[RMDB]
RNA sequence: GGGAACGACUCGAGUAGAGUCGAAAAGUGCCUCGUCGGCCCGGCAUUCCAACCUGAUCCGAAGUUCAAGGUGGUUUCUCUGGCCUUCCAGAGAGAUGCGCGUCGGAAGAACCGACGAACAAACCUUAAAACAAAACGACGUUCGCGUCGUUUUGAACAGAAGUGCAAUGUUCGCAUUGCACUUCUGAAAAGAAACAACAACAACAAC
Reactivity to 2A3 in 0.01 (KOAc 150mM, MgCl2 10mM, bicine 150mM(pH8.5), 24C), signal-to-noise 1, nucleotides 027 to 156: g030u010g070c010c020u010c030g010u000c000g000g000c000c000c000g000g020c000a020u100u070c030c020a070a080c000c020u020g020a010u060c080c000g240a280a100g090u100u020c070a120a000g020g000u010g010g000u010u080u000c010u000c010u010g020g000c070c030u160u140c010c010a000g000a000g010a010g010a060u120g100c120g010c060g060u020c010g000g040a050a070g020a160a090c020c000g000a000c000g030a010a020c020a010a070a040c000c010u100u230a120a120a060a050c010a010a020a000a000c010g000a000c010g020u060u060c160g000c010g100u000c000g010u000u000u000u010g000a020a000
Reactivity to DMS in 0.01 (KOAc 150mM, MgCl2 10mM, bicine 150mM(pH8.5), 24C), signal-to-noise 2, nucleotides 027 to 156: g020u000g020c040c040u000c000g040u000c000g040g010c000c010c020g010g000c050a140u000u010c070c050a050a090c030c000u050g030a110u000c040c020g030a080a150g020u000u010c080a140a090g000g000u000g010g020u000u000u000c010u010c000u000g000g010c170c130u000u030c010c020a050g000a040g020a040g030a020u000g010c090g010c030g020u000c010g000g000a230a140g010a080a120c010c000g000a020c000g000a020a050c030a130a050a090c020c020u000u000a030a060a100a200c040a020a000a010a010c000g000a020c000g030u000u010c300g050c040g020u000c000g000u010u000u010u010g020a120a200
Notes: This 207-nucleotide RNA was probed chemically with 2A3 and DMS. The RNA was probed in 150 mM KOAc, 10 mM MgCl2 and 150 mM bicine (pH 8.5) at 24 C. It was measured as part of the RMDB library M2RFPK. The DMS profile rests on 3,012 reads.